Structure probing data (DMS and 2A3) for a 177-nucleotide construct. For 2A3 the reverse transcriptase was SuperScript II with manganese. It was measured as part of the RMDB library OK1LIB. Values cover nucleotides 27 to 126. Conditions: 150 mM KOAc, 10 mM MgCl2 and 150 mM bicine (pH 8.5), 24 C. For 2A3, 980 sequencing reads were counted.

RNA sequence: GGGAACGACUCGAGUAGAGUCGAAAAGAUGGUAGCAAUGGGGGAGACAAAGCAGCAGGAGAUAAAAAAGUUUUAAAAGUAGCAGCCUUAGAAUCGGCCUAUGGUGCUGAUAUGUGGGAUAAAGUAACCCUAUACGGAUCUUCGGAUCCGUAUAGGGAAAAGAAACAACAACAACAAC
Reactivity to DMS in 0.01 (KOAc 150mM, MgCl2 10mM, bicine 150mM(pH8.5), 24C), signal-to-noise 2, nucleotides 027 to 126: g020a120u000g010g020u040a020g000c080a060a090u010g020g000g000g020g000a140g000a080c110a030a090a030g000c070a100g010c000a040g000g010a090g000a090u040a000a030a100a020a090a090g000u030u000u000u040a040a070a080a190g030u020a030g000c060a140g020c030c010u000u030a060g000a060a000u010c070g010g000c010c040u020a100u020g020g020u020g020c000u010g010a020u000a010u000g030u010g000g000g010a100u010a040a000a060g000u020a020a070
Reactivity to 2A3 in 0.01 (KOAc 150mM, MgCl2 10mM, bicine 150mM(pH8.5), 24C), signal-to-noise 2, nucleotides 027 to 126: g070a000u140g000g060u050a070g000c060a050a040u020g000g000g000g000g070a030g000a040c040a010a100a000g000c000a000g000c000a010g080g070a030g040a070u160a030a000a000a030a030a020g080u080u080u080u070a180a160a010a010g060u050a050g040c050a000g040c010c000u050u100a020g010a040a060u050c050g020g020c000c000u250a300u240g150g080u230g020c040u000g010a030u030a010u130g050u090g100g000g000a050u120a080a240a000g100u060a060a080